RNA sequence: GGGAACGACUCGAGUAGAGUCGAAAAACAGAAGGGUGAAAGUUUAAGCAAGCUAGCCGGCAAAAAAGCAAACUUGACCACCAAGGAUAAAAGAGAUCUUAUCCAAGGAUGCAAAAGAUAAUCUCACAAAAGCUUCAUUCGUUCGCGAAUGAAGCAAUCAUAGUACGGUGUUCGCACCGUACUAUGAAAAAGAAACAACAACAACAAC
Reactivity to 2A3 in 0.01 (KOAc 150mM, MgCl2 10mM, bicine 150mM(pH8.5), 24C), signal-to-noise 3, nucleotides 027 to 156: a000c040a010g140a080a050g100g000g010u040g030a140a020a020g030u060u070u100a070a000g020c040a060a000g000c000u070a020g030c020c030g030g000c050a050a120a070a050a000a000g050c030a060a050a010c010u020u030g040a040c020c010a010c010c010a020a040g020g000a010u020a080a070a030a010g110a020g000a010u020c010u030u030a010u000c010c020a020a030g050g010a030u080g030c020a080a100a010a000g010a010u080a140a050u110c040u010c040a040c060a020a140a020a010g000c000u000u000c000a000u000u010c000g040u060u070c250g020c010g120a000a010u000g000a000a010g000c010a000a000
Reactivity to DMS in 0.01 (KOAc 150mM, MgCl2 10mM, bicine 150mM(pH8.5), 24C), signal-to-noise 1, nucleotides 027 to 156: a090c020a130g020a080a060g030g000g010u000g000a070a040a030g020u000u010u000a070a100g050c030a010a080g040c000u000a300g040c000c010g000g000c050a010a000a040a030a100a070g000c020a070a060a080c060u000u000g050a220c090c040a110c040c020a100a300g000g030a030u000a020a020a020a080g030a240g000a110u000c050u000u000a010u010c040c000a000a280g000g000a040u000g000c010a020a010a060a060g030a100u000a030a130u000c040u010c050a100c060a160a040a070a060g000c000u000u000c000a020u000u000c000g090u010u000c300g000c030g010a030a000u000g000a000a000g000c000a000a020